[RMDB]
RNA sequence: GGGAACGACUCGAGUAGAGUCGAAAAAUUAAGCAUCUUGAGGUCGCCGGUAAAGCGAUCCUUGCGCGAUUUGCUCAUGGCGUCGCGAUAGUAGCCGAGAAGCGCCAAAUAAGCAUCUUGGGAGUUGCUCAUUUCAUUACUAACUCUUUGCAUGAUAUCUACCCCAUGAGUUCGCUCAUGGGGUAGAAAAAGAAACAACAACAACAAC
Reactivity to 2A3 in 0.01 (KOAc 150mM, MgCl2 10mM, bicine 150mM(pH8.5), 24C), signal-to-noise 2, nucleotides 027 to 156: a000u150u180a030a010g020c010a010u000c000u040u090g060a100g020g000u030c010g000c020c110g060g040u210a120a120a000g000c000g010a010u060c000c000u030u050g040c060g000c000g090a100u120u040u200g010c020u050c120a060u270g040g000c020g000u000c040g000c000g000a000u010a070g060u060a010g070c030c010g000a000g010a150a000g130c050g000c060c110a110a180a070u150a050a050g000c000a000u000c020u050u020g020g030g030a100g010u050u030g010c010u020c050a100u050u180u070c000a000u090u160a050c180u210a190a090c070u110c040u020u150u110g000c090a060u240g000a030u230a040

An RNA of 207 nucleotides, treated with 2A3 and read out base by base. The reactions ran in a buffer of 150 mM KOAc, 10 mM MgCl2 and 150 mM bicine (pH 8.5), at 24 C.